[RMDB]
RNA sequence: GGGAACGACUCGAGUAGAGUCGAAAAGAUAUGGAUCCAGCUUGCAUCGAUCACACUGGGUCGGAAACGACCUUGUGGGAGCAAACUGGAUCCUAAGUCAAAGAAUCGCAGGUUCGCCUGCGAUUCACGAAUUACGAACCUUCGGGUUCGUAAUUCGAAAAGAAACAACAACAACAAC
Reactivity to DMS in 0.01 (KOAc 150mM, MgCl2 10mM, bicine 150mM(pH8.5), 24C), signal-to-noise 2, nucleotides 027 to 126: g010a020u000a000u020g000g000a010u000c000c000a000g010c020u000u010g060c000a300u010c210g010a120u000c060a040c020a020c200u020g000g010g040u000c000g010g010a020a000a020c000g010a010c000c000u020u010g010u000g040g010g020a040g000c000a010a000a010c010u000g010g000a010u000c000c010u010a000a110g000u010c020a100a150a140g010a020a010u000c000g000c000a000g020g010u000u010c300g030c000c000u000g000c000g000a000u010u000c000a120
Reactivity to 2A3 in 0.01 (KOAc 150mM, MgCl2 10mM, bicine 150mM(pH8.5), 24C), signal-to-noise 2, nucleotides 027 to 126: g000a030u000a010u040g000g010a000u030c000c000a020g010c010u020u000g010c000a130u260c300g260a180u130c160a010c000a020c090u050g010g050g000u010c000g000g010a010a000a000c010g000a000c000c030u010u000g010u020g010g020g030a280g020c020a000a000a000c000u000g000g000a000u010c000c000u010a000a000g010u000c020a020a050a150g000a010a000u010c000g000c010a020g010g060u100u250c300g240c060c040u000g000c050g010a000u020u010c000a000